Source information:
This 177-nucleotide RNA was probed chemically with 2A3 and DMS. The reactions ran in a buffer of 150 mM KOAc, 10 mM MgCl2 and 150 mM bicine (pH 8.5), at 24 C. As a SHAPE reagent, 2A3 marks flexible, mostly unpaired nucleotides at the ribose 2'-OH. The data come from the RNA Mapping Database (RMDB), library OK1LIB.

[RMDB]
RNA sequence: GGGAACGACUCGAGUAGAGUCGAAAACUCCUCAGAAUGAUAACACAGAGACCGGAGGAGGGCCAGUGCAGUAGGACUCCCACUGAGCUUGUUUAGCUUGUGUUAGCACUACGAGGUUACGAGUGGGCACCCGGUAUUGUUUCGACAAUACCGGGUGAAAAGAAACAACAACAACAAC
Reactivity to 2A3 in 0.01 (KOAc 150mM, MgCl2 10mM, bicine 150mM(pH8.5), 24C), signal-to-noise 3, nucleotides 027 to 126: c020u020c020c000u030c010a060g150a090a070u100g050a040u090a160a020c060a000c020a040g090a000g070a170c030c060g140g000a040g030g030a050g010g010g010c000c000a020g010u040g070c010a030g040u220a050g010g060a060c010u020c050c000c000a000c040u050g000a020g040c010u060u070g050u170u300u170a040g010c030u040u030g010u020g030u090u050a010g010c000a000c070u070a020c040g010a020g070g000u050u070a040c060g010a050g050u060g030g020g000
Reactivity to DMS in 0.01 (KOAc 150mM, MgCl2 10mM, bicine 150mM(pH8.5), 24C), signal-to-noise 3, nucleotides 027 to 126: c070u010c000c000u020c010a080g010a170a090u020g030a100u020a050a100c070a060c050a070g000a110g030a070c110c070g000g010a080g000g010a050g010g010g020c030c000a080g010u000g020c170a070g000u020a060g000g000a300c090u020c020c050c010a060c070u020g020a100g030c010u000u000g000u030u010u040a100g010c050u020u010g010u000g000u000u010a070g010c090a090c100u000a120c060g000a020g030g020u020u050a060c110g000a090g020u000g010g010g010
For 2A3, 2,647 sequencing reads were counted.